Conditions: 150 mM KOAc, 10 mM MgCl2 and 150 mM bicine (pH 8.5), 24 C.
Structure probing data (DMS and 2A3) for a 207-nucleotide construct.
DMS adducts were read by reverse transcription with MarathonRT.
Source: RMDB library OK3TST, as collected in RNAgym.
RNA sequence: GGGAACGACUCGAGUAGAGUCGAAAACAACAGGCCCAUCCGCUGAUGACUUGUAAAAAUAAGUCGCUCCAUCCUCCUCCACGUUCGCAUCUCUAGAGAACGGUGCAAUCCUACCGAGGACCCAAGCAGCCCGGUUGCGCCUUUAGCUUUACAGACAUAAUCAAAAUCGUUUCGACGAUUUUGAUUAAAAAGAAACAACAACAACAAC
Reactivity to DMS in 0.01 (KOAc 150mM, MgCl2 10mM, bicine 150mM(pH8.5), 24C), signal-to-noise 2, nucleotides 027 to 156: c040a110a110c050a130g010g000c020c010c040a110u010c020c070g000c050u030g010a100u000g020a060c010u050u010g000u020a010a130a110a120a120u020a040a060g020u010c020g010c020u010c000c010a140u000c040c020u010c030c040u010c010c000a050c110g000u000u000c020g000c030a160u000c070u020c080u000a070g000a100g030a030a030c090g000g020u010g040c040a060a100u000c000c020u000a070c070c080g000a120g060g000a080c030c010c050a070a220g020c010a100g020c000c040c010g060g010u010u000g000c050g100c050c040u000u000u000a140g040c040u000u000u000a160c090a110g000a080c090a250
Reactivity to 2A3 in 0.01 (KOAc 150mM, MgCl2 10mM, bicine 150mM(pH8.5), 24C), signal-to-noise 2, nucleotides 027 to 156: c030a000a020c030a030g010g000c000c050c020a030u030c010c060g010c110u040g050a120u130g030a040c010u100u060g070u160a020a060a070a070a150u150a020a070g010u050c020g000c050u000c020c010a060u040c010c020u000c010c000u020c010c010a030c060g030u040u010c020g000c040a070u020c030u020c040u120a030g010a000g000a240a020c050g010g000u010g000c010a020a100u090c010c000u010a060c020c000g010a080g010g010a000c000c000c010a040a110g010c020a020g030c010c000c050g000g000u030u030g010c010g000c020c000u040u070u060a020g050c030u100u090u110a060c110a030g110a010c000a080